[RMDB]
Record summary: Chemical mapping of a 207-nucleotide RNA with DMS and 2A3. The RNA was probed in 150 mM KOAc, 10 mM MgCl2 and 150 mM bicine (pH 8.5) at 24 C. It was measured as part of the RMDB library M2RFPK. 2A3 adducts were read by reverse transcription with SuperScript II with manganese. Values cover nucleotides 27 to 156.
RNA sequence: GGGAACGACUCGAGUAGAGUCGAAAAUGUGGAAGUCCUGCUCGGGGCGGAAGCAUUAAAACCAUUCGAGCUACUCAAUGCGUGGCGUGUCUCUCCGCAGCGUGUUGGCGAAUGUAAAGAGUGACUAUUGACCACGCAACGUUCGCGUUGCGUGGAACUUAUGACGUUGGUUCGCCAACGUCAUAAGAAAAGAAACAACAACAACAAC
Reactivity to DMS in 0.01 (KOAc 150mM, MgCl2 10mM, bicine 150mM(pH8.5), 24C), signal-to-noise 2, nucleotides 027 to 156: u010g020u010g020g010a300a280g000u010c010c010u010g000c170u010c190g010g020g030g000c000g020g000a300a290g020c020a050u000u000a040a080a070a130c050c020a110u010u000c010g000a050g010c020u000a070c010u030c030a020a070u000g000c030g050u010g020g040c000g000u000g010u010c040u000c010u010c100c000g010c010a050g000c000g000u000g000u000u000g020g000c050g010a090a070u000g010u000a050a130a100g000a060g010u000g010a110c070u000a190u000u000g000a180c010c000a040c020g000c000a020a000c000g000u000u000c220g030c030g020u010u000g010c000g040u010g010g000a000a050
Reactivity to 2A3 in 0.01 (KOAc 150mM, MgCl2 10mM, bicine 150mM(pH8.5), 24C), signal-to-noise 4, nucleotides 027 to 156: u000g000u020g010g010a030a020g010u000c000c020u080g130c180u130c200g010g000g000g000c000g000g010a000a010g000c000a000u040u080a010a000a000a080c030c010a020u040u090c090g060a060g020c080u180a050c020u060c030a000a010u030g000c000g010u010g060g000c010g020u020g010u000c010u000c000u000c010c010g000c010a020g010c010g000u020g000u030u010g070g000c090g060a110a090u230g030u290a010a090a020g010a010g010u030g010a010c020u070a120u110u200g120a090c000c000a010c000g000c000a000a000c000g010u000u060c230g000c010g100u000u000g000c000g000u000g000g000a000a010